[RMDB]
The record gives the reactivity of an RNA of 177 nucleotides to DMS and 2A3. 2A3 is a SHAPE reagent: it acylates the 2'-hydroxyl of flexible nucleotides of all four kinds.
RNA sequence: GGGAACGACUCGAGUAGAGUCGAAAAUAAUUAUUUUAAACCUAAAGAUGCUAUUCCUGUUAUUAUAUCCAUAGGAAAGGAUAAAGAUGUUUGUGAACUAUUAAUCGCAUCCGAUAAAGCGUGUGCGCACUAGUUCGUCAUUCGUGACGAACUAGUGAAAAGAAACAACAACAACAAC
Reactivity to DMS in 0.01 (KOAc 150mM, MgCl2 10mM, bicine 150mM(pH8.5), 24C), signal-to-noise 2, nucleotides 027 to 126: u050a080a040u050u010a140u040u050u010u000a050a100a180c020c030u010a040a090a080g010a090u020g020c010u000a110u000u010c000c040u000g000u000u010a080u010u020a080u020a060u000c070c080a080u000a080g010g020a070a110a100g000g010a010u000a010a130a070g000a100u010g030u000u020u020g030u010g000a090a050c070u010a070u000u050a090a170u040c000g000c010a000u000c140c060g020a100u030a030a070a120g000c010g000u000g050u000g000c000g000
Reactivity to 2A3 in 0.01 (KOAc 150mM, MgCl2 10mM, bicine 150mM(pH8.5), 24C), signal-to-noise 2, nucleotides 027 to 126: u170a010a060u080u130a130u040u060u010u100a080a080a040c000c000u000a000a000a170g040a070u090g000c010u020a170u140u050c000c000u010g040u100u040a110u140u030a040u060a010u120c040c040a080u090a060g120g040a170a020a020g050g010a020u100a090a050a000g070a030u170g070u120u040u110g050u030g060a040a070c030u040a120u240u120a100a010u020c010g010c000a000u000c040c110g060a170u030a160a300a060g080c000g010u040g000u000g030c000g000

DMS adducts were read by reverse transcription with MarathonRT. For 2A3, 1,264 sequencing reads were counted. The RNA was probed in 150 mM KOAc, 10 mM MgCl2 and 150 mM bicine (pH 8.5) at 24 C.